[RMDB]
Notes: Conditions: 150 mM KOAc, 10 mM MgCl2 and 150 mM bicine (pH 8.5), 24 C. This 177-nucleotide RNA was probed chemically with 2A3 and DMS.

RNA sequence: GGGAACGACUCGAGUAGAGUCGAAAACGCAACCGCUACCACCAGCGUGGUGGCGCUUACACCUGGAAUUAACCAGCCGGGAAUUAACGGCUGACGGCGCGUUGCCAUUCGCUAAUCCAUGCCUGACUGCAAGGGUAACAUUCGUGUUACCCUUGCAAAAAGAAACAACAACAACAAC
Reactivity to 2A3 in 0.01 (KOAc 150mM, MgCl2 10mM, bicine 150mM(pH8.5), 24C), signal-to-noise 1, nucleotides 027 to 126: c040g020c010a020a010c010c010g000c000u040a020c000c020a020c010c040a160g050c090g140u030g020g000u010g020g000c000g020c000u060u080a000c040a020c040c000u000g040g000a100a030u070u010a160a120c080c020a000g030c000c000g000g000g170a090a160u280u110a100a030c000g000g030c010u000g040a030c020g000g000c000g000c040g040u010u070g050c000c020a080u110u060c010g000c020u070a030a010u050c030c000a000u050g020c020c020u070g090a120c060
Reactivity to DMS in 0.01 (KOAc 150mM, MgCl2 10mM, bicine 150mM(pH8.5), 24C), signal-to-noise 3, nucleotides 027 to 126: c170g020c070a060a060c160c010g000c010u000a050c010c010a030c010c170a120g000c300g000u000g010g000u010g000g000c050g010c080u010u000a070c030a160c060c070u000g010g030a080a140u020u000a060a130c180c010a040g000c010c000g010g010g010a120a100u000u010a100a180c050g000g000c020u000g020a060c120g050g010c050g050c070g000u010u030g010c010c030a180u010u010c070g040c060u010a050a110u000c020c040a040u010g010c040c020u000g010a200c110